[RMDB]
RNA sequence: GGGAACGACUCGAGUAGAGUCGAAAAGGUCUGAUCUUCGGAUCAGACCAACUCUGAUUCCCAAUAGCUGCGUAUCUUGGCUAAGACGGAUAGGCGUUGCGACUCAGGGGGGUUUCGACCCCCCUAACUGAUGGAUGUUGUUCGCAACAUCCAUCAGAAAAGAAACAACAACAACAAC
Reactivity to DMS in 0.01 (KOAc 150mM, MgCl2 10mM, bicine 150mM(pH8.5), 24C), signal-to-noise 2, nucleotides 027 to 126: g010g010u000c000u000g000a000u000c010u010u010c200g010g000a010u000c010a000g000a000c000c000a010a010c110u010c090u000g000a220u000u000c000c000c010a070a170u010a050g000c010u000g000c100g000u000a030u010c020u000u020g010g000c050u000a090a070g010a100c140g000g000a070u010a110g000g010c060g010u000u000g020c010g020a120c150u010c160a030g000g040g000g030g010g000u000u000u010c140g000a030c000c000c000c000c000c000u000a010a040